[RMDB]
RNA sequence: GGGAACGACUCGAGUAGAGUCGAAAAUUGAACGGAUUCGUCCGUUCAACGCGUGCGAUCCAAACGUAGUACAAAAGUACAGACGAAAGCACAAGGAUCUAAUGAUACAGCCGUUCGCGGCUGUAAAAAGAAUGAGAACUUUCGAGUUCUCAUUCUUAAAAGAAACAACAACAACAAC
Reactivity to 2A3 in 0.01 (KOAc 150mM, MgCl2 10mM, bicine 150mM(pH8.5), 24C), signal-to-noise 3, nucleotides 027 to 126: u020u020g000a000a000c000g010g020a000u040u050c150g070u000c040c000g000u000u010c000a000a000c040g050c030g030u050g010c040g030a030u020c040c000a010a060a070c030g030u040a010g010u010a050c030a040a300a050a060g010u000a010c020a010g170a060c030g060a200a060a030g010c030a030c030a080a070g070g010a020u020c030u080a190a050u150g060a050u020a060c010a000g000c000c010g040u050u090c200g010c020g080g000c000u000g000u000a010a000a000
Reactivity to DMS in 0.01 (KOAc 150mM, MgCl2 10mM, bicine 150mM(pH8.5), 24C), signal-to-noise 5, nucleotides 027 to 126: u010u000g000a000a010c000g000g010a020u000u010c210g010u000c000c000g010u000u000c000a000a010c110g020c200g020u000g010c030g010a090u010c020c030a050a100a260c030g010u000a100g010u000a020c020a110a070a080a140g010u000a020c010a090g010a080c050g000a100a100a140g000c030a040c070a120a130g000g000a050u000c030u010a070a100u000g010a260u000a010c000a000g010c000c000g010u000u010c210g020c020g010g000c000u010g000u000a000a020a110
Conditions: 150 mM KOAc, 10 mM MgCl2 and 150 mM bicine (pH 8.5), 24 C. The record gives the reactivity of an RNA of 177 nucleotides to 2A3 and DMS. The data come from the RNA Mapping Database (RMDB), library M2PK50.